[RMDB]
RNA sequence: GGGAACGACUCGAGUAGAGUCGAAAAGAAGCGCCUACAGCCGUCCCGGCGGGCGUAGCCCAGUUUGUUAUAAUUAGUAAACAGGCGAAAACUCUCCACCAAUUCCAUCAAGACGGCCAUCGAAGCAUAAAUAAAUGGCAUUCGUGCCAUUUAUUUAAAAAGAAACAACAACAACAAC
Reactivity to DMS in 0.01 (KOAc 150mM, MgCl2 10mM, bicine 150mM(pH8.5), 24C), signal-to-noise 6, nucleotides 027 to 126: g000a160a200g000c030g010c010c010u010a120c230a240g020c010c010g010u000c050c070c030g020g050c030g010g000g020c010g020u000a080g000c010c010c010a130g010u010u010u010g010u000u000a070u000a100a160u010u010a080g010u000a040a060a060c030a100g000g020c010g000a080a050a090a100c080u000c030u000c030c010a050c040c060a050a130u010u000c050c020a070u000c070a050a110g000a090c070g000g010c010c020a040u010c070g010a090a110g020c130a110
Reactivity to 2A3 in 0.01 (KOAc 150mM, MgCl2 10mM, bicine 150mM(pH8.5), 24C), signal-to-noise 2, nucleotides 027 to 126: g030a120a030g040c000g030c000c000u060a110c120a040g020c000c010g020u040c050c060c000g000g030c000g020g010g000c010g000u020a050g000c000c020c030a040g000u020u050u030g050u060u080a110u030a280a230u260u070a060g010u010a040a050a060c020a030g000g020c010g050a050a060a030a010c010u050c010u020c050c010a030c000c020a040a060u110u000c020c000a030u050c030a040a030g050a030c030g020g000c020c010a050u070c020g010a050a000g040c030a060
This 177-nucleotide RNA was probed chemically with DMS and 2A3. Source: RMDB library OK2TST, as collected in RNAgym. For 2A3 the reverse transcriptase was SuperScript II with manganese. For DMS, 5,180 sequencing reads were counted.